[RMDB]
RNA sequence: GGGAACGACUCGAGUAGAGUCGAAAAGGAGAGAGGAAUUUUAUCUUCAGGAGCACCGAUUGUAUGUUUUCAUAACAUGGAUUUAGCAAAAUUGGAUGUUGAAGUAGGGUUUCCUGUAGCCACUUAUAGUAAAUCAGGUAUUCGUACCUGAUUUACUAAAAGAAACAACAACAACAAC
Reactivity to DMS in 0.01 (KOAc 150mM, MgCl2 10mM, bicine 150mM(pH8.5), 24C), signal-to-noise 5, nucleotides 027 to 126: g000g000a070g020a080g010a050g010g000a050a030u000u030u010u020a050u050c050u010u000c020a050g000g040a110g010c040a040c020c020g010a050u010u040g010u020a030u000g010u020u010u010u040c090a070u020a040a040c050a270u000g000g010a090u010u020u020a060g010c150a040a030a050a070u000u020g000g010a060u000g010u010u010g000a020a050g000u000a060g000g010g010u000u010u010c010c010u020g000u020a120g000c060c080a130c010u000u010a060u000
Reactivity to 2A3 in 0.01 (KOAc 150mM, MgCl2 10mM, bicine 150mM(pH8.5), 24C), signal-to-noise 9, nucleotides 027 to 126: g080g020a030g010a010g030a020g040g060a040a020u060u070u050u060a100u120c030u040u030c020a030g070g080a030g050c020a030c040c010g050a050u030u080g090u080a120u050g070u000u020u040u130c110a090u130a130a070c020a040u050g090g060a130u070u110u180a080g040c070a030a040a060a090u070u060g050g030a100u080g110u160u040g060a050a020g010u050a040g030g010g020u020u080u080c020c010u030g020u050a020g030c020c020a040c020u050u030a060u000